RNA sequence: GGGAACGACUCGAGUAGAGUCGAAAACGCUUUAGCAGCUUAAUGCUAACCGAUGCAAGAAUUGACUGUGGUUUGAAGCAUCGGCUAAACACACAGUCUAGCCAAGCUAUAUUGCUUGGAUAUAGUUUGGUAAAAACUUAAUCAAGCUAGCUUUUAUCGGGAAAUGUAUGUUCGCAUACAUUUCCCGAAAAGAAACAACAACAACAAC
Reactivity to 2A3 in 0.01 (KOAc 150mM, MgCl2 10mM, bicine 150mM(pH8.5), 24C), signal-to-noise 1, nucleotides 027 to 156: c060g010c020u050u010u000a000g000c010a000g000c000u150u250a160a020u140g000c020u010a000a000c000c000g000a000u000g000c010a000a050g010a040a010u000u000g010a010c000u010g020u000g000g010u020u010u050g070a080a010g000c000a000u010c000g000g020c010u170a190a130a010c020a000c000a000c000a010g000u000c000u000a000g030c010c000a020a000g000c010u000a010u010a010u020u280g000c000u000u000g010g030a000u000a000u000a000g000u000u000u000g010g000u040a000a040a000a000a000c090u180u190a080a050u110c000a000a000g010c010u050a060g020c000u100u030u050u090a160u200

The record gives the reactivity of an RNA of 207 nucleotides to 2A3. The reactions ran in a buffer of 150 mM KOAc, 10 mM MgCl2 and 150 mM bicine (pH 8.5), at 24 C. Source: RMDB library ARCHII, as collected in RNAgym. 2A3 adducts were read by reverse transcription with SuperScript II with manganese.